[RMDB]
RNA sequence: GGGAACGACUCGAGUAGAGUCGAAAAGCAUUGUUCUUCGCGCGCGCCCUCGUCGUAGGCCACCACUUCGCGGUAUUUUAUCAGGCGGGACCUGGAAAGCGCCGUCCUGUAGGCCAGAUAGAUGUAGCACUCUAACCGACUUCGGUCGGUUAGAGUGAAAAGAAACAACAACAACAAC
Reactivity to DMS in 0.01 (KOAc 150mM, MgCl2 10mM, bicine 150mM(pH8.5), 24C), signal-to-noise 1, nucleotides 027 to 126: g020c130a070u000u010g010u020u010c030u000u000c050g050c060g010c030g000c000g040c020c040c000u000c030g000u000c040g000u050a160g020g000c000c010a100c130c070a080c000u000u000c130g050c000g000g000u000a110u000u050u000u020a080u010c060a050g000g000c000g020g010g030a050c050c000u020g040g050a070a090a140g010c160g010c020c010g010u000c070c040u010g000u070a030g000g010c030c050a010g000a070u030a030g050a080u000g000u000a070g000
Reactivity to 2A3 in 0.01 (KOAc 150mM, MgCl2 10mM, bicine 150mM(pH8.5), 24C), signal-to-noise 3, nucleotides 027 to 126: g050c080a090u010u080g020u030u060c030u020u070c060g030c000g010c020g010c000g010c070c000c000u020c040g060u010c010g030u040a060g020g030c010c010a010c010c000a020c020u090u090c120g000c020g080g000u070a110u040u050u000u030a170u180c000a010g050g000c020g000g070g020a110c040c040u080g020g070a080a020a050g060c080g000c020c000g030u070c000c000u070g090u140a120g040g000c000c000a020g030a050u100a030g100a050u140g040u060a010g030